The data come from the RNA Mapping Database (RMDB), library OK2TRN. An RNA of 177 nucleotides, treated with 2A3 and DMS and read out base by base.
[RMDB]
RNA sequence: GGGAACGACUCGAGUAGAGUCGAAAAGACACGACGGAGACGUCGUGUCAAAGAGUGGGAAACCACUCAAAGAGCCACAGCUUCGGCUGUGGCUCAAGGCACGGCACCGUCCGUGGAACAAACGGAAGGAGUAUAUACGAUUCGUCGUAUAUACUCCAAAAGAAACAACAACAACAAC
Reactivity to 2A3 in 0.01 (KOAc 150mM, MgCl2 10mM, bicine 150mM(pH8.5), 24C), signal-to-noise 5, nucleotides 027 to 126: g020a010c000a000c000g000a000c010g000g030a110g060a110c060g010u010c000g000u000g000u000c000a000a000a000g000a000g000u010g000g000g000a010a060a080c000c000a000c000u000c000a020a030a010g000a000g000c000c000a010c010a010g030c010u090u120c280g130g000c010u000g000u010g000g000c000u000c000a010a000g000g000c000a000c000g000g000c010a020c090c020g100u130c030c010g000u030g060g090a080a060c070a080a060a010c030g050g030a070a120
Reactivity to DMS in 0.01 (KOAc 150mM, MgCl2 10mM, bicine 150mM(pH8.5), 24C), signal-to-noise 6, nucleotides 027 to 126: g010a110c000a010c000g010a020c000g020g010a220g000a170c100g030u000c000g000u000g000u000c000a030a080a110g000a010g030u000g000g000g010a160a120a220c000c000a000c000u000c000a020a070a100g000a010g000c010c000a000c000a010g020c010u010u020c260g020g010c000u000g040u000g000g010c000u000c000a020a030g010g010c020a000c000g010g010c000a150c010c010g000u010c040c020g020u000g010g000a090a090c140a020a030a050c050g000g000a150a120
Record summary:
For DMS, 8,702 sequencing reads were counted. For DMS the reverse transcriptase was MarathonRT. 2A3 adducts were read by reverse transcription with SuperScript II with manganese.